RNA sequence: GGGAACGACUCGAGUAGAGUCGAAAAGAAGCUGUCUUCGGACAGCUUCGGUUUAUUUCGUGUAAUCGUCGAGACGUUCCCAUGAUUACAUGAAAUAAUUUGCUGUCUGCGGAUUCGUCCGCAGAAAGACCAUUGCCUUAUUCGUAAGGCAAUGGUCAAAAGAAACAACAACAACAAC
Reactivity to 2A3 in 0.01 (KOAc 150mM, MgCl2 10mM, bicine 150mM(pH8.5), 24C), signal-to-noise 3, nucleotides 027 to 126: g000a000a010g000c010u000g000u000c020u050u130c250g070g020a000c000a000g000c010u000u000c000g000g000u000u020u010a020u000u010u010c000g000u010g000u000a040a020u010c060g090u070c190g090a080g070a280c010g020u000u000c000c000c000a000u020g000a000u000u020a000c000a000u020g020a010a020a000u050a010a030u050u110u160g120c100u060g030u100c000u000g000c010g020g010a000u020u030c200g040u030c060c010g000c000a000g000a000a010a000
Reactivity to DMS in 0.01 (KOAc 150mM, MgCl2 10mM, bicine 150mM(pH8.5), 24C), signal-to-noise 2, nucleotides 027 to 126: g000a000a000g010c000u000g020u010c020u000u010c200g010g000a000c000a010g000c000u000u000c000g000g010u010u000u010a010u000u000u000c000g040u000g020u000a010a010u000c010g010u000c190g000a080g000a300c030g040u010u000c000c000c010a040u010g000a010u000u000a010c010a010u000g000a010a010a010u020a010a040u010u000u000g010c070u010g010u000c000u000g000c010g020g000a030u000u010c200g000u000c000c000g000c000a010g000a010a050a110